Source information
Structure probing data (2A3) for a 207-nucleotide construct. The 2A3 profile rests on 369 reads. It was measured as part of the RMDB library OK3TST.

[RMDB]
RNA sequence: GGGAACGACUCGAGUAGAGUCGAAAAACAGCUUUUCUACUUACUGGCUACAAAACUCUGGGCAACUAACUCCUCUAACUUCUAGUUGCCUCUUUUGCAAAGCUGAUUGUGAAGAGUUGAUAGAGAGGCUUAAAUGAAAGAGGAUUAAUUUAUUCAACCCUCCUAUUACCUUCGGGUAAUAGGAGGGAAAAGAAACAACAACAACAAC
Reactivity to 2A3 in 0.01 (KOAc 150mM, MgCl2 10mM, bicine 150mM(pH8.5), 24C), signal-to-noise 1, nucleotides 027 to 156: a000c000a030g030c000u030u030u000u030c060u060a010c070u160u040a020c070u150g010g010c030u150a100c120a000a180a170a000c000u000c040u120g000g000g000c000a040a010c010u040a030a080c010u030c020c070u190c000u040a090a150c000u160u090c010u000a010g080u010u010g000c000c010u050c030u000u000u030u010g000c020a220a100a000g060c000u060g100a130u160u070g120u090g040a140a050g010a010g030u070u020g030a000u080a010g060a000g000a000g010g000c000u120u100a070a080a000u200g020a000a010a040g000a000g000g000a000u160u030a060a060u110u160u170a190u040u050c040a110a130